Chemical mapping of a 177-nucleotide RNA with 2A3 and DMS. For DMS, 1,861 sequencing reads were counted. Values cover nucleotides 27 to 126. Conditions: 150 mM KOAc, 10 mM MgCl2 and 150 mM bicine (pH 8.5), 24 C. It was measured as part of the RMDB library TTRDEL. Values are in units of 0.01, from 0 to 300, in steps of 10. For 2A3 the reverse transcriptase was SuperScript II with manganese.
RNA sequence: GGGAACGACUCGAGUAGAGUCGAAAAGAUAUGGAUAUUUACUCUUCUUUGAUCUCGGAAACGAGGGAGAAGGUAACUGUAUCCUAAGUCAAAGAUACCAUAGAGGGUUCGCCCUCUAUGGUAUCAACAUCCCAACUUGGUUCGCCAAGUUGGGAUGAAAAGAAACAACAACAACAAC
Reactivity to 2A3 in 0.01 (KOAc 150mM, MgCl2 10mM, bicine 150mM(pH8.5), 24C), signal-to-noise 1, nucleotides 027 to 126: g040a000u090a000u160g010g000a000u000a060u040u040u020a100c120u150c050u300u030c000u300u300u010g100a070u010c010u020c000g000g060a130a060a020c000g010a010g020g000g000a030g010a000a000g000g000u010a010a050c120u170g060u030a000u020c000c000u020a120a080g030u040c020a040a040a200g000a000u000a000c000c040a000u000a000g020a010g000g110g040u020u180c240g090c000c000c000u010c010u010a000u010g000g000u000a000u000c000a000a000
Reactivity to DMS in 0.01 (KOAc 150mM, MgCl2 10mM, bicine 150mM(pH8.5), 24C), signal-to-noise 2, nucleotides 027 to 126: g000a030u010a300u010g010g010a000u000a010u010u000u000a000c010u010c000u010u000c000u000u000u030g000a040u000c000u020c010g000g020a090a060a260c000g000a030g000g000g000a010g020a030a000g020g000u000a000a010c300u010g000u000a000u000c000c000u000a070a240g000u000c020a060a130a100g000a030u000a010c000c000a000u010a000g010a020g020g010g020u000u010c280g000c000c000c000u000c000u010a000u000g000g010u000a000u000c000a040a170